[RMDB]
RNA sequence: GGGAACGACUCGAGUAGAGUCGAAAAUCCCGUUAAUCGUCUGACUACGCUACUCAUCCUUUCCGCCUCAAAUUAACGUUCGUAAAAUCAGCAAAAAACGAGGAUUUUUCGUUCAUAUACCUAACAACUAAAGUUGAUUGUUCGCAAUCAACUUUAGAAAAGAAACAACAACAACAAC
Reactivity to DMS in 0.01 (KOAc 150mM, MgCl2 10mM, bicine 150mM(pH8.5), 24C), signal-to-noise 3, nucleotides 027 to 126: u000c000c000c000g030u000u010a090a110u010c100g010u000c030u000g000a090c070u010a090c080g010c030u000a060c040u000c010a080u000c030c030u000u000u000c030c040g000c040c010u020c090a060a090a080u010u000a070a170c110g010u000u000c030g030u010a030a020a060a050u000c030a030g020c040a010a050a100a070a060a100c160g010a080g010g010a060u000u000u000u000u000c040g020u000u000c040a070u010a120u000a110c060c040u010a070a060c180a070a170
Reactivity to 2A3 in 0.01 (KOAc 150mM, MgCl2 10mM, bicine 150mM(pH8.5), 24C), signal-to-noise 2, nucleotides 027 to 126: u020c000c000c010g000u050u140a090a070u080c030g080u000c050u040g020a060c020u030a010c060g010c000u020a040c000u010c060a080u080c020c000u040u050u020c010c020g040c030c010u030c030a040a080a050u100u070a070a040c070g000u020u020c010g000u010a000a000a010a060u030c000a000g060c030a080a120a000a060a070a020c080g010a060g110g000a020u050u020u000u000u010c010g000u000u010c020a020u090a010u030a250c010c020u060a120a060c040a050a040